RNA sequence: GGGAACGACUCGAGUAGAGUCGAAAAGAUAUGGAACACUGCUUUUGACGAGUGGUAUUCGGAAACGAAUAGAAGCUCGAUAAGCGUGUUCCUAAGUCAAACCUACCAACGUUCGCGUUGGUAGGAAGUUUCCUUAUCCGUUCGCGGAUAAGGAAACAAAAGAAACAACAACAACAAC
Reactivity to 2A3 in 0.01 (KOAc 150mM, MgCl2 10mM, bicine 150mM(pH8.5), 24C), signal-to-noise 3, nucleotides 027 to 126: g010a010u040a020u140g000g010a010a000c000a020c080u300g090c020u190u160u150u280g280a200c110g000a000g030u110g040g270u010a000u010u000c000g020g000a040a070a050c000g000a000a000u020a040g110a090a000g000c000u000c040g150a120u030a080a010g000c000g010u000g000u020u030c000c000u010a070a000g000u000c030a030a080a170c020c000u010a000c020c010a010a010c010g020u060u090c300g000c000g140u000u000g020g000u000a000g000g000a000a000
Reactivity to DMS in 0.01 (KOAc 150mM, MgCl2 10mM, bicine 150mM(pH8.5), 24C), signal-to-noise 2, nucleotides 027 to 126: g020a000u000a300u010g000g010a010a000c000a000c000u030g020c000u000u000u000u000g040a200c060g010a030g030u030g000g020u000a000u000u000c000g020g000a070a100a180c010g000a010a000u000a010g010a300a300g000c000u000c000g050a100u000a000a000g040c010g010u000g000u010u000c000c010u000a000a060g000u000c010a070a080a190c010c000u000a000c010c000a000a000c000g010u000u010c260g020c000g040u000u010g000g000u000a000g000g020a010a050
An RNA of 177 nucleotides, treated with 2A3 and DMS and read out base by base.
The RNA was probed in 150 mM KOAc, 10 mM MgCl2 and 150 mM bicine (pH 8.5) at 24 C.
It was measured as part of the RMDB library TTRDEL.
For DMS, 1,340 sequencing reads were counted.